Annotation:
The record gives the reactivity of an RNA of 207 nucleotides to DMS and 2A3. 2A3 is a SHAPE reagent: it acylates the 2'-hydroxyl of flexible nucleotides of all four kinds. The reactions ran in a buffer of 150 mM KOAc, 10 mM MgCl2 and 150 mM bicine (pH 8.5), at 24 C. For 2A3, 725 sequencing reads were counted.
RNA sequence: GGGAACGACUCGAGUAGAGUCGAAAAAUUUCAUCCUCAUUCUUAAAGGAUAUUUUCAUCAGCAACACCACACCCUCCUGAUCACCAUAGCUUUAUGGAUGCAAUUGUCCAAUUAUUGGUGAAAUUGUCAUUUCAUGCUAUUGGCUAUUUGAAAUUAGAGUAAUAGGACGUUCGCGUCCUAUUACUCAAAAGAAACAACAACAACAAC
Reactivity to DMS in 0.01 (KOAc 150mM, MgCl2 10mM, bicine 150mM(pH8.5), 24C), signal-to-noise 1, nucleotides 027 to 156: a130u010u000u000c050a110u020c000c010u020c010a110u020u010c270u010u010a120a080a040g020g010a070u000a050u000u020u000u000c060a100u000c040a060g010c020a020a070c020a010c030c070a070c070a090c040c000c020u020c050c040u020g010a070u000c070a050c020c020a110u000a020g020c060u020u000u000a050u000g030g040a030u000g000c020a090a060u000u000g020u000c010c000a050a150u000u000a150u010u000g080g010u010g010a060a050a020u000u000g000u010c010a110u000u000u030c040a110u000g010c020u010a060u000u010g010g000c030u000a130u000u000u000g020a110a060a150u020u000a230
Reactivity to 2A3 in 0.01 (KOAc 150mM, MgCl2 10mM, bicine 150mM(pH8.5), 24C), signal-to-noise 2, nucleotides 027 to 156: a010u110u170u130c040a010u010c020c010u010c020a080u170u110c040u080u160a140a120a010g060g000a030u010a140u120u150u110u050c040a050u000c000a010g100c030a040a110c050a070c050c000a040c010a030c010c000c000u050c000c010u010g010a060u030c020a020c040c000a000u000a000g010c000u130u080u080a000u040g010g000a000u000g000c010a020a000u010u040g060u050c030c000a050a140u240u070a120u220u070g000g010u040g020a010a030a000u040u000g030u060c030a030u000u060u100c000a000u080g000c000u030a000u050u070g010g040c030u030a020u100u040u100g140a080a080a010u180u210a040